Chemical mapping of a 177-nucleotide RNA with DMS and 2A3. The DMS profile rests on 6,990 reads. For DMS the reverse transcriptase was MarathonRT. For 2A3, 14,101 sequencing reads were counted. The RNA was probed in 150 mM KOAc, 10 mM MgCl2 and 150 mM bicine (pH 8.5) at 24 C.

RNA sequence: GGGAACGACUCGAGUAGAGUCGAAAAUCAAUCAUGUUCGCAUGAUUGAAAAGGUCAGGUGACCAAACCACGUCACGCGUCGAAGCGACCGAGCCCGGAGGCAAAGUGCAAUCUUCGGAUUGCACAAGUAGUUUUAUGUGUUCGCACAUAAAACUACAAAAGAAACAACAACAACAAC
Reactivity to DMS in 0.01 (KOAc 150mM, MgCl2 10mM, bicine 150mM(pH8.5), 24C), signal-to-noise 6, nucleotides 027 to 126: u000c010a010a000u000c010a010u000g010u010u010c190g020c010a010u000g000a010u010u000g000a010a030a110a100g010g010u000c020a110g020g010u010g000a030c020c140a050a120a120c120c110a110c160g000u000c030a030c040g010c080g010u000c090g000a100a090g010c060g000a030c030c020g010a110g000c010c010c020g020g010a070g000g010c140a080a080a100g000u000g000c000a000a000u000c000u000u010c230g010g010a010u000u000g000c000a000c000a010a070
Reactivity to 2A3 in 0.01 (KOAc 150mM, MgCl2 10mM, bicine 150mM(pH8.5), 24C), signal-to-noise 3, nucleotides 027 to 126: u000c000a000a010u000c010a000u010g020u060u060c160g020c110a000u010g010a000u020u000g000a040a040a010a020g040g000u040c040a030g000g190u040g080a010c020c000a090a090a040c060c030a050c040g020u020c020a020c030g130c040g090u090c090g080a090a030g050c020g040a020c010c010g000a010g050c010c010c000g030g050a060g030g010c060a120a060a030g000u000g000c000a000a000u010c000u030u080c210g090g000a000u010u000g000c000a000c000a000a010